Description: Structure probing data (2A3 and DMS) for a 207-nucleotide construct. For DMS, 4,554 sequencing reads were counted. Values are in units of 0.01, from 0 to 300, in steps of 10. The RNA was probed in 150 mM KOAc, 10 mM MgCl2 and 150 mM bicine (pH 8.5) at 24 C.
RNA sequence: GGGAACGACUCGAGUAGAGUCGAAAAAAAGGUUCAUACUUGAAAUUGAACCUAAUGCAAGAUCAGACUGGUAAAAUGGAGUGAAGUUACAAAAAGAAAUCUGAUAAUGAGAGGUGAAGCCAGCUGGACUUCCUAGGUCAAGUGGGGACAUGGAGAAAAACUGUCCCUUAUUCGUAAGGGACAGUUUAAAAGAAACAACAACAACAAC
Reactivity to 2A3 in 0.01 (KOAc 150mM, MgCl2 10mM, bicine 150mM(pH8.5), 24C), signal-to-noise 2, nucleotides 027 to 156: a000a000a010g000g000u020u010c020a030u050a160c100u190u200g050a110a160a130u150u010g010a020a010c000c000u010a060a010u120g030c050a040a010g000a070u030c000a020g100a080c040u010g020g000u070a060a080a050a090u130g040g010a040g000u070g040a050a020g010u030u060a050c060a070a040a040a000a030g060a050a080a040u040c040u060g020a040u040a170a120u090g010a060g000a020g070g020u050g000a010a000g030c000c000a010g000c030u010g000g020a000c000u050u050c020c040u020a040g020g010u060c040a020a040g010u020g010g050g000g000a000c010a050u030g000g030a040g010a000a180
Reactivity to DMS in 0.01 (KOAc 150mM, MgCl2 10mM, bicine 150mM(pH8.5), 24C), signal-to-noise 2, nucleotides 027 to 156: a070a080a040g000g020u000u010c010a030u000a160c100u000u020g000a110a110a110u010u010g010a000a050c010c000u000a030a070u000g030c060a120a110g020a050u000c030a050g000a090c030u000g000g010u010a020a080a120a040u010g010g010a060g040u000g010a080a100g020u000u010a120c100a050a060a080a080a140g020a060a060a020u010c030u000g000a130u000a040a080u010g000a100g000a090g010g020u000g010a030a140g020c010c030a040g050c020u030g020g000a050c050u000u000c050c030u010a080g030g010u000c040a050a070g000u010g000g050g010g010a040c030a080u010g000g000a100g010a090a040